Conditions: 150 mM KOAc, 10 mM MgCl2 and 150 mM bicine (pH 8.5), 24 C.
This 177-nucleotide RNA was probed chemically with 2A3 and DMS.
Values cover nucleotides 27 to 126.
Source: RMDB libraries RFM100 and RFMREP, as collected in RNAgym.
Reactivities are rounded to 0.1 and cut off at 0 and 3.
RNA sequence: GGGAACGACUCGAGUAGAGUCGAAAACAUCGGCUACACACUGCUUGACACAUAUUGUUAGAAGCACCUCGCAUCUGCAAGUUCUCUUAAGCAAAAUACUUGCAUUAGGUCUCAGCUGGGGCUGUGCGAUGUAUAGUUCGUUCGCGAACUAUACAUCAAAAGAAACAACAACAACAAC
Reactivity to 2A3 in 0.01 (KOAc 150mM, MgCl2 10mM, bicine 150mM(pH8.5), 24C), signal-to-noise 9, nucleotides 027 to 126: c020a060u080c020g020g000c020u090a040c050a000c000a010c050u030g010c010u040u060g030a020c020a000c020a110u110a110u240u220g050u060u090a060g030a120a010g010c010a040c010c010u040c020g020c020a070u050c020u060g010c010a030a030g010u070u020c070u000c000u100u140a110a040g040c070a020a030a060a070u150a080c030u020u020g000c000a030u030u120a050g000g020u010c010u010c030a040g000c040u090g010g010g060g000c020u020g030u040g050c040
Reactivity to DMS in 0.01 (KOAc 150mM, MgCl2 10mM, bicine 150mM(pH8.5), 24C), signal-to-noise 7, nucleotides 027 to 126: c080a100u020c050g010g010c020u000a050c070a060c060a100c050u010g000c020u010u000g020a060c090a060c140a070u010a090u030u010g010u000u010a070g010a080a060g020c040a070c050c030u000c090g000c080a070u010c100u010g000c020a020a020g010u000u010c080u010c080u000u020a070a110g010c150a050a050a080a090u020a030c040u000u000g000c010a050u000u010a060g010g010u000c030u010c040a090g010c060u010g000g000g000g020c040u000g010u010g010c120